[RMDB]
RNA sequence: GGGAACGACUCGAGUAGAGUCGAAAACAGACUGUCCACCACUAACCCUGUGUACCUAACCAUUUGGGGUCUUAGACUCUUUUGACAAUCUGAUUAAAUGCACUGCUCCCUUCCCCUGAAAUACACACACAGGUGCACAGACUACACGGGGAUACAAACGUAUUACUGAGUUCGCUCAGUAAUACGUAAAAGAAACAACAACAACAAC
Reactivity to DMS in 0.01 (KOAc 150mM, MgCl2 10mM, bicine 150mM(pH8.5), 24C), signal-to-noise 3, nucleotides 027 to 156: c050a080g000a080c040u020g040u000c020c030a080c050c020a110c060u000a110a130c290c050c010u000g010u010g020u010a050c050c030u000a090a070c100c040a130u000u000u000g010g020g050g020u000c030u000u010a150g020a070c050u000c020u000u000u000u000g060a110c070a030a100u000c050u000g030a150u000u000a010a090a110u010g000c030a080c030u010g000c020u000c000c010c010u000u000c010c020c010c040u000g000a040a060a100u000a120c050a120c100a080c070a070c180a090g010g030u000g030c030a040c040a120g000a080c060u000a090c060a060c050g020g000g000g000a140u000a040c080a050a110
Reactivity to 2A3 in 0.01 (KOAc 150mM, MgCl2 10mM, bicine 150mM(pH8.5), 24C), signal-to-noise 5, nucleotides 027 to 156: c030a000g120a060c050u050g010u020c010c050a090c020c020a070c210u100a080a110c010c000c000u000g020u000g000u020a020c000c020u040a090a080c070c040a140u090u040u150g020g000g000g010u020c020u020u050a060g010a040c010u030c010u060u110u100u200g030a050c050a090a110u050c070u060g070a140u110u140a100a050a060u080g030c030a020c060u070g010c020u020c010c010c000u020u040c000c000c000c000u000g020a020a030a020u200a040c080a000c020a000c000a000c020a110g040g000u010g000c000a000c000a000g010a010c010u040a020c040a020c020g000g000g000g030a000u060a050c060a030a180
Overview:
Chemical mapping of a 207-nucleotide RNA with DMS and 2A3. It was measured as part of the RMDB library OK3TST. Conditions: 150 mM KOAc, 10 mM MgCl2 and 150 mM bicine (pH 8.5), 24 C. 2A3 is a SHAPE reagent: it acylates the 2'-hydroxyl of flexible nucleotides of all four kinds. Reactivities are given for positions 27 through 156. The DMS profile rests on 4,583 reads. The 2A3 profile rests on 3,712 reads.